[RMDB]
RNA sequence: GGGAACGACUCGAGUAGAGUCGAAAAGAUAUGGAAUGAAGGUCUUUUGACGCUCCUUGUGUCGGAAACGACACAAGAGCGAUAAGACCCAUUCCUAAGUCAAAACUGGCUGGUUCGCCAGCCAGAACCCAAAAUAUCUCUUCGGAGAUAUUUUGGGAAAAGAAACAACAACAACAAC
Reactivity to DMS in 0.01 (KOAc 150mM, MgCl2 10mM, bicine 150mM(pH8.5), 24C), signal-to-noise 2, nucleotides 027 to 126: g000a040u000a300u010g010g020a010a020u000g010a160a220g010g000u000c000u000u000u000u000g030a250c070g060c000u000c150c090u000u000g000u000g010u000c000g030g020a070a070a120c010g000a010c000a000c000a000a010g000a020g020c020g020a120u000a010a030g010a000c000c000c010a030u000u000c000c010u000a040a110g010u010c030a140a040a140a160c010u000g010g010c000u000g000g000u010u020c240g010c000c000a000g020c000c000a000g000a040a100
Reactivity to 2A3 in 0.01 (KOAc 150mM, MgCl2 10mM, bicine 150mM(pH8.5), 24C), signal-to-noise 2, nucleotides 027 to 126: g010a030u050a030u130g000g020a010a040u050g080a300a170g030g000u010c020u110u240u190u300g230a250c170g000c000u050c050c050u060u000g020u010g000u000c030g000g000a060a060a020c000g000a010c000a000c000a000a000g020a010g000c020g030a020u050a040a000g010a000c000c000c010a000u030u000c020c000u000a090a010g040u040c010a000a040a180a210c020u000g010g000c020u000g000g050u080u070c300g020c130c000a000g010c030c010a000g000a010a010
Record summary
An RNA of 177 nucleotides, treated with DMS and 2A3 and read out base by base. 2A3 adducts were read by reverse transcription with SuperScript II with manganese. Reactivities are given for positions 27 through 126. For DMS, 1,444 sequencing reads were counted. The reactions ran in a buffer of 150 mM KOAc, 10 mM MgCl2 and 150 mM bicine (pH 8.5), at 24 C. DMS adducts were read by reverse transcription with MarathonRT.